[RMDB]
RNA sequence: GGGAACGACUCGAGUAGAGUCGAAAAUGUUGAUCGGCUGUUGUCUGACCUCGCCCAUUUGGAUGCCUCGCUGCCUAAGCGCGGUGGGGAGGAUGAACCGUUUCCGGUUUUCGAUGCCGCGCUCCGCGUACGCCGUAAUCUUCGGAUUACGGCGUACAAAAGAAACAACAACAACAAC
Reactivity to DMS in 0.01 (KOAc 150mM, MgCl2 10mM, bicine 150mM(pH8.5), 24C), signal-to-noise 1, nucleotides 027 to 126: u020g010u020u000g000a120u000c060g030g000c000u020g000u010u000g010u000c020u000g000a080c040c000u010c050g020c000c010c040a170u000u020u000g020g000a130u000g000c030c030u010c060g000c040u000g020c020c010u000a110a080g020c080g000c010g000g030u000g000g000g000g000a070g030g010a160u030g010a050a080c060c010g030u000u000u000c130c040g010g010u000u000u000u000c110g000a270u000g000c010c020g030c050g000c050u000c070c030g020c160